[RMDB]
RNA sequence: GGGAACGACUCGAGUAGAGUCGAAAAGACCAUCACGCAAAGGAAUAUAUGCAAUAAUGUUAAACUGCGGAACAGCUACAUGCACGUUACAUGAUGUAGCACGCUGGGUCUAUGAUGGUAAUUUGGACGACGAGUGGCCAAUAUUAAAGUGGCAAGGCUGUGAUUCCUACUUCGGUAGGAAUCACAGAAAAGAAACAACAACAACAAC
Reactivity to 2A3 in 0.01 (KOAc 150mM, MgCl2 10mM, bicine 150mM(pH8.5), 24C), signal-to-noise 1, nucleotides 027 to 156: g050a010c000c000a000u040c070a020c090g070c060a070a000a290g170g000a140a080u190a000u000a000u300g010c010a000a140u190a180a090u140g000u150u150a030a120a000c000u070g120c020g000g060a140a000c010a060g000c000u000a040c000a000u020g180c020a010c160g190u160u180a050c110a210u110g000a000u020g040u090a000g000c000a010c040g020c040u010g030g030g030u000c000u090a020u010g010a000u000g000g000u010a200a210u040u080u000g050g020a000c020g000a020c000g020a020g090u000g010g000c000c000a000a050u050a010u110u190a120a180a000g100u070g000g000c000a020a020g120g020